[RMDB]
RNA sequence: GGGAACGACUCGAGUAGAGUCGAAAACGGAUCGUCAGAAUAACGAUACGCGCCGCACGGCUAAUGGCCGACCGCAAGAGACGAUUAACGUCAAUCUGCGCGCAUAAGCAGAAUUUGCGGAAUUUUACUUUACGUCACAGUUCGCUGUGACGUAAAGAAAAGAAACAACAACAACAAC
Reactivity to DMS in 0.01 (KOAc 150mM, MgCl2 10mM, bicine 150mM(pH8.5), 24C), signal-to-noise 1, nucleotides 027 to 126: c060g010g050a030u030c000g000u000c020a090g010a020a060u020a090a050c010g060a010u000a000c010g000c120g020c010c030g010c190a090c010g030g020c030u080a190a200u010g000g000c030c070g020a230c050c000g050c000a000a000g000a130g030a010c000g000a300u000u050a000a070c030g030u000c000a170a120u000c000u020g000c000g000c300g000c050a160u010a020a130g040c010a030g000a050a300u000u010u000g000c010g000g000a090a030u020u000u000u000a000
Reactivity to 2A3 in 0.01 (KOAc 150mM, MgCl2 10mM, bicine 150mM(pH8.5), 24C), signal-to-noise 1, nucleotides 027 to 126: c020g020g000a020u020c000g050u020c050a050g150a300a210u260a100a030c010g000a010u010a040c010g000c000g010c080c000g060c020a070c020g020g000c020u060a190a080u150g140g000c010c000g000a040c010c010g000c010a010a010g060a010g000a170c020g020a010u140u190a260a060c010g000u000c000a000a080u050c020u010g000c010g000c000g000c030a070u060a280a020g000c010a000g000a020a070u060u040u040g010c010g030g000a010a000u080u090u000u020a080